This 207-nucleotide RNA was probed chemically with 2A3 and DMS. Source: RMDB library OK3TST, as collected in RNAgym. The DMS profile rests on 2,020 reads. For 2A3 the reverse transcriptase was SuperScript II with manganese. Conditions: 150 mM KOAc, 10 mM MgCl2 and 150 mM bicine (pH 8.5), 24 C.

RNA sequence: GGGAACGACUCGAGUAGAGUCGAAAAACUGGAAGACGGGCAAAGGAAGAUUAUACUUUUAGUUUCUAUGGCCUGCCUUGGGGAGAAAAAGCAGCAGGUGAAAGGAGGUCAGGAGAAGAUCUGAGAAACAGCCUGCUGUUUUCUGAGGCCCGAAGUGGAAGAUAACAUUUUUCGAAAUGUUAUCUUCAAAAGAAACAACAACAACAAC
Reactivity to 2A3 in 0.01 (KOAc 150mM, MgCl2 10mM, bicine 150mM(pH8.5), 24C), signal-to-noise 2, nucleotides 027 to 156: a000c020u050g040g020a050a020g030a030c040g000g000g070c040a080a060a100g070g030a020a020g020a040u140u080a080u210a190c050u090u110u090u120a030g010u010u030u010c020u020a150u130g030g010c000c020u000g030c010c000u010u060g000g000g000g010a080g030a040a140a050a010a010g000c000a000g000c010a000g030g020u020g060a110a050a020g070g050a010g000g050u000c010a010g050g170a120g080a070a020g020a050u050c020u030g030a040g100a170a090a020c030a010g010c000c000u000g030c000u010g000u000u000u010u040c010u010g060a030g050g010c020c010c010g000a020a000g060u130g020
Reactivity to DMS in 0.01 (KOAc 150mM, MgCl2 10mM, bicine 150mM(pH8.5), 24C), signal-to-noise 1, nucleotides 027 to 156: a100c030u040g040g070a080a040g000a050c030g030g000g000c020a050a100a190g010g010a070a080g010a130u010u000a160u010a090c160u000u000u000u000a150g000u000u000u000c030u010a150u000g020g020c040c010u020g050c010c010u000u000g010g000g010g040a160g000a060a070a030a080a060g020c020a030g020c030a070g020g000u000g000a100a140a180g000g030a090g050g020u000c030a120g000g000a110g020a140a150g000a080u010c030u020g000a160g000a170a040a100c070a300g000c000c010u010g010c010u010g000u000u000u000u010c060u020g020a140g040g020c020c010c020g000a030a070g020u010g010